[RMDB]
RNA sequence: GGGAACGACUCGAGUAGAGUCGAAAAACUACUCCGCUUACGAGCGGAGUAGAAUGACGGGCGAGCUUUUGGCCCGGGUUAUACCUGAUGCUCACGUAUAAGACGAGCAAAAAGCUUGUUGGUCAAACAUAUAGGUUCGUUUCGACGAACCUAUAUGAAAAGAAACAACAACAACAAC
Reactivity to 2A3 in 0.01 (KOAc 150mM, MgCl2 10mM, bicine 150mM(pH8.5), 24C), signal-to-noise 4, nucleotides 027 to 126: a000c000u000a000c000u000c000c000g000c020u040u040a080c270g100a040g000c000g020g010a000g010u000a000g000a000a020u060g010a010c040g040g010g010c000g000a000g020c020u020u030u020u050g050g000c010c020c020g000g000g010u030u020a030u010a020c020c040u030g050a070u250g070c110u100c070a030c030g020u020a020u010a090a050g120a030c010g000a000g000c000a020a010a000a010a000g000c000u020u010g020u000u020g140g000u010c000a090a010a010
Reactivity to DMS in 0.01 (KOAc 150mM, MgCl2 10mM, bicine 150mM(pH8.5), 24C), signal-to-noise 4, nucleotides 027 to 126: a090c010u000a010c010u000c000c000g020c000u000u010a110c190g030a060g030c010g000g000a010g020u000a000g010a050a040u010g010a010c010g000g000g000c010g010a010g010c000u000u000u000u000g010g000c000c010c000g000g010g000u000u000a000u000a010c000c060u000g010a140u020g020c270u010c030a020c250g000u000a010u000a020a020g000a040c010g000a040g000c010a010a000a010a010a000g000c000u000u000g020u000u000g000g020u010c000a070a120a190

Source information: An RNA of 177 nucleotides, treated with 2A3 and DMS and read out base by base. Source: RMDB libraries RFM100 and RFMREP, as collected in RNAgym. Values cover nucleotides 27 to 126.